[RMDB]
RNA sequence: GGGAACGACUCGAGUAGAGUCGAAAAAACUGUAAGAUUCCUACACAUCCAAGCAUGCGUGUGUGAUUAGGGUGACCUGGGAGAAGCAGCCAGCCUGGAAGUGAAGCCUGACACUCAGGUUUGUUAGCCAUUCUGCAUCCAAACUGCAUGAUUGCGCCAACACUCCACAGUUCGCUGUGGAGUGUUGAAAAGAAACAACAACAACAAC
Reactivity to DMS in 0.01 (KOAc 150mM, MgCl2 10mM, bicine 150mM(pH8.5), 24C), signal-to-noise 2, nucleotides 027 to 156: a020a050c040u000g030u000a100a030g010a210u000u000c010c000u000a050c020a030c010a030u010c020c020a110a150g040c060a030u010g000c050g020u020g090u000g050u030g020a060u000u000a110g000g000g000u000g000a120c080c040u010g010g020g030a100g020a080a170g050c000a070g000c030c020a110g020c030c010u020g000g010a090a190g020u000g000a050a130g000c060c030u030g000a100c040a140c080u000c040a070g060g000u000u000u020g020u000u000a110g030c010c010a100u000u000c030u010g020c010a030u000c060c080a100a130a080c170u000g010c030a050u000g000a070u000u000g030c000g020c020
Reactivity to 2A3 in 0.01 (KOAc 150mM, MgCl2 10mM, bicine 150mM(pH8.5), 24C), signal-to-noise 2, nucleotides 027 to 156: a000a000c170u130g090u090a140a090g050a210u040u040c000c000u090a010c030a010c000a020u160c060c010a090a000g080c040a060u150g000c050g050u070g000u020g010u010g070a140u050u200a070g010g000g050u040g030a080c070c120u090g040g050g010a040g010a040a020g020c010a000g030c020c000a000g020c010c010u060g030g060a140a060g030u020g050a030a010g050c010c070u070g050a060c030a050c050u060c020a000g000g000u000u020u030g040u010u020a030g010c010c010a020u040u030c010u030g010c010a010u010c030c030a060a080a030c060u030g000c000a020u070g010a090u030u140g020c020g010c030
This 207-nucleotide RNA was probed chemically with DMS and 2A3. It was measured as part of the RMDB library OK3TST. The 2A3 profile rests on 1,101 reads. 2A3 adducts were read by reverse transcription with SuperScript II with manganese.